An RNA of 177 nucleotides, treated with 2A3 and DMS and read out base by base. The DMS profile rests on 4,914 reads. Conditions: 150 mM KOAc, 10 mM MgCl2 and 150 mM bicine (pH 8.5), 24 C. For 2A3, 6,834 sequencing reads were counted. 2A3 adducts were read by reverse transcription with SuperScript II with manganese. Source: RMDB library OK2TRN, as collected in RNAgym. DMS (dimethyl sulfate) methylates the pairing face of unpaired adenines and cytosines.
[RMDB]
RNA sequence: GGGAACGACUCGAGUAGAGUCGAAAAGAGGAUUCAACGAGCUUCGUAGCAACGAUAGCAACGUAGCUUUUGCUACGACCCUAGCUAUCGAGGGGAGCUACGUCCCAUGCUCGAGGGAAGAAUCCGAAGUGGACUAGUAUUUCGAUACUAGUCCACUAAAAGAAACAACAACAACAAC
Reactivity to 2A3 in 0.01 (KOAc 150mM, MgCl2 10mM, bicine 150mM(pH8.5), 24C), signal-to-noise 4, nucleotides 027 to 126: g120a020g000g000a000u020u010c020a060a060c040g000a010g010c010u070u050c040g020u020a000g000c010a070a100c020g010a020u010a010g000c020a030a040c020g000u010a000g000c020u130u150u210u300g000c000u000a000c010g160a170c060c000c020u050a040g000c000u010a000u000c010g020a100g040g090g020g010a110g010c000u010a010c000g060u070c040c030c010a020u130g000c000u020c000g020a080g080g090g030a080a160g010a020a000u010c000c000g000a030
Reactivity to DMS in 0.01 (KOAc 150mM, MgCl2 10mM, bicine 150mM(pH8.5), 24C), signal-to-noise 5, nucleotides 027 to 126: g010a210g010g010a010u000u000c000a110a170c030g020a030g000c000u000u010c010g010u000a000g010c020a160a160c050g020a010u000a010g020c010a160a160c010g010u000a000g010c000u000u000u000u010g020c000u000a010c000g010a090c190c150c180u000a100g000c000u000a000u010c020g010a120g030g010g010g030a190g010c010u000a000c050g000u000c130c080c110a110u010g000c020u000c000g010a140g000g010g030a130a130g000a020a010u000c000c000g010a100